[RMDB]
RNA sequence: GGGAACGACUCGAGUAGAGUCGAAAAAUCAUCUAAAGAUCAGCUAUUAGAAGAGAAAGAUCAGUUAAGUCCUUUGGACCUGAUCAGCUUGAUACAAGAACUACUGAUUUCAACUUCUUUGGCUUAAAAAAGGCCACAGAGUUCGCUCUGUGGCCAAGUGCUGUAAGUACUUCGGUACUUACAGCACAAAAGAAACAACAACAACAAC
Reactivity to 2A3 in 0.01 (KOAc 150mM, MgCl2 10mM, bicine 150mM(pH8.5), 24C), signal-to-noise 1, nucleotides 027 to 156: a000u000c010a010u040c030u130a050a060a030g100a170u090c070a030g000c030u040a070u190u020a170g010a040a000g000a020g070a030a040a090g030a010u000c000a000g010u060u160a170a000g000u000c000c020u050u140u140g080g050a070c020c050u030g080a090u040c010a010g100c020u030u130g000a020u020a160c040a020a080g000a060a040c020u020a010c000u050g010a020u000u060u000c040a150a050c010u000u000c000u070u030u080g000g020c000u010u010a030a000a000a000a000a010g010g010c010c000a010c010a000g000a000g020u040u040c090g070c080u000c040u000g000u000g090g090c000c000a010a000